RNA sequence: GGGAACGACUCGAGUAGAGUCGAAAAAUGCCGCAUUCAGAGACGGUGACUCUAGUGGGCGACUGUCUAUCUAGCGUUGACAUCUACAUACUAUAUAGUAAUACCAAUACUCAAGACUACGAAACGGGCUGAUGCAGUAUUUCGAUACUGCAUCAGCAAAAGAAACAACAACAACAAC
Reactivity to 2A3 in 0.01 (KOAc 150mM, MgCl2 10mM, bicine 150mM(pH8.5), 24C), signal-to-noise 3, nucleotides 027 to 126: a000u250g000c010c010g000c100a070u160u100c000a020g030a020g020a200c040g070g040u020g050a000c000u010c000u000a060g050u090g000g000g000c040g000a160c150u160g030u000c000u000a080u000c000u000a020g020c000g020u000u010g070a020c020a080u000c000u040a070c020a090u060a030c080u090a070u050a030u090a260g070u060a060a000u000a100c000c020a000a070u010a080c000u020c110a060a050g030a110c020u050a080c100g130a100a040a050c020g000g030
Reactivity to DMS in 0.01 (KOAc 150mM, MgCl2 10mM, bicine 150mM(pH8.5), 24C), signal-to-noise 1, nucleotides 027 to 126: a010u130g000c000c000g040c090a040u000u000c090a000g000a000g000a170c030g000g000u000g000a000c030u050c000u000a000g100u000g000g000g000c040g000a250c120u050g000u030c040u000a110u000c000u000a000g000c070g050u000u010g000a130c250a110u020c150u000a140c050a060u040a060c020u020a010u040a230u030a020g050u000a000a060u000a080c030c120a040a110u000a050c110u000c100a000a020g000a000c160u000a020c110g000a050a050a010c140g000g020